An RNA of 207 nucleotides, treated with 2A3 and read out base by base.
2A3 adducts were read by reverse transcription with SuperScript II with manganese.
[RMDB]
RNA sequence: GGGAACGACUCGAGUAGAGUCGAAAAGGGCCAUGUACCUAUCCAAAAUGAGAUCCCAUCUUGCACACUGUGCUAAUUUGAGAUUCUCAUGCCUCCUACUUGGAGAGAUCAGGACUAGAAGUCAGGGAAUAGGUCGUUUCUUUCGAGAAACGACCAAUCACCUCCUCCUGUUCGCAGGAGGAGGUGAAAAAGAAACAACAACAACAAC
Reactivity to 2A3 in 0.01 (KOAc 150mM, MgCl2 10mM, bicine 150mM(pH8.5), 24C), signal-to-noise 2, nucleotides 027 to 156: g030g030g010c020c050a050u160g070u160a110c010c000u010a050u110c060c010a050a030a000a120u010g000a000g000a010u010c000c000c000a000u000c000u010u050g000c000a000c050a060c170u300g000u030g010c070u130a000a070u040u000u000g080a010g030a030u300u050c010u030c050a070u110g000c030c000u020c030c000u130a300c110u120u100g020g000a000g000a020g000a030u080c080a060g000g030a030c000u030a030g020a230a030g100u030c000a010g000g000g090a090a150u110a160g040g000u000c010g000u000u000u000c020u030u040u150c250g050a000g000a000a000a000c000g010a000c060c000a000a000
Reactivities are given for positions 27 through 156. The 2A3 profile rests on 720 reads. Source: RMDB library M2RFPK, as collected in RNAgym.